Source: RMDB library RFM100, as collected in RNAgym. An RNA of 177 nucleotides, treated with 2A3 and DMS and read out base by base. 2A3 adducts were read by reverse transcription with SuperScript II with manganese. The DMS profile rests on 1,870 reads. For DMS the reverse transcriptase was MarathonRT. Values cover nucleotides 27 to 126.
RNA sequence: GGGAACGACUCGAGUAGAGUCGAAAAACCUCGAGACCCAGAUUCCUAAAAGAAUGGACAGAAGAAGAAGGGUGAAAAGAAUAAUGAAAAUUAUCCACCUGCGAGUAAAAAAGGGUAUUUACCGCACCCCUAGGGGUAAGUUCGCUUACCCCUAGGGAAAAGAAACAACAACAACAAC
Reactivity to 2A3 in 0.01 (KOAc 150mM, MgCl2 10mM, bicine 150mM(pH8.5), 24C), signal-to-noise 2, nucleotides 027 to 126: a000c010c000u010c050g140a120g080a110c000c010c060a000g020a230u060u060c020c010u030a140a000a060a030g100a170a130u130g020g020a040c020a050g160a090a000g030a060a040g060a070a130g150g020g000u040g000a050a010a000a100g050a000a050u060a000a020u020g080a020a040a000a110u050u070a020u020c040c020a020c010c030u060g010c000g070a060g080u060a000a000a050a070a060a040g010g020g000u000a020u020u000u010a000c000c000g000c020a060c000
Reactivity to DMS in 0.01 (KOAc 150mM, MgCl2 10mM, bicine 150mM(pH8.5), 24C), signal-to-noise 2, nucleotides 027 to 126: a100c010c010u000c070g020a100g020a150c040c010c010a120g000a220u040u000c000c020u020a080a090a130a190g040a110a060u020g010g000a130c130a190g000a140a100g010a150a040g010a080a160g010g010g040u000g000a060a090a090a070g000a030a020u000a050a000u020g000a120a100a040a010u000u000a010u000c040c000a020c000c010u020g000c000g000a050g030u000a000a000a040a070a110a050g030g000g050u010a060u020u010u000a000c030c010g000c020a140c280